[RMDB]
RNA sequence: GGGAACGACUCGAGUAGAGUCGAAAAUGUUCAUCGCGCGUCUGUUAAUGAGUUUUGGAUGUGAGUGCCUUGACACACUUUGCGAGAAGCUGCUUGAACGAUAUGAACAGCAAGAAGGAAUUGUGUGAGUGACACGGACAACCGCCCCGCAAUUCCACACCAGGAUGUAGUUCGCUACAUCCUGGUGAAAAGAAACAACAACAACAAC
Reactivity to 2A3 in 0.01 (KOAc 150mM, MgCl2 10mM, bicine 150mM(pH8.5), 24C), signal-to-noise 1, nucleotides 027 to 156: u080g050u020u000c000a000u050c120g010c000g010c080g060u010c010u000g060u080u090a120a090u130g040a010g000u010u060u080u150g110g010a060u040g020u060g070a010g010u010g030c020c020u050u210g050a010c000a000c000a000c070u060u040u160g010c060g020a040g000a040a000g030c020u050g010c000u000u110g040a080a000c050g000a000u020a100u220g080a080a030c000a000g080c060a060a060g080a020a050g050g010a000a000u000u000g000u000g000u000g020a150g020u050g040a030c090a020c150g010g060a040c010a090a130c050c020g000c020c000c050c010g000c000a000a000u000u020c000c000a000
An RNA of 207 nucleotides, treated with 2A3 and read out base by base. Source: RMDB library OK3TST, as collected in RNAgym.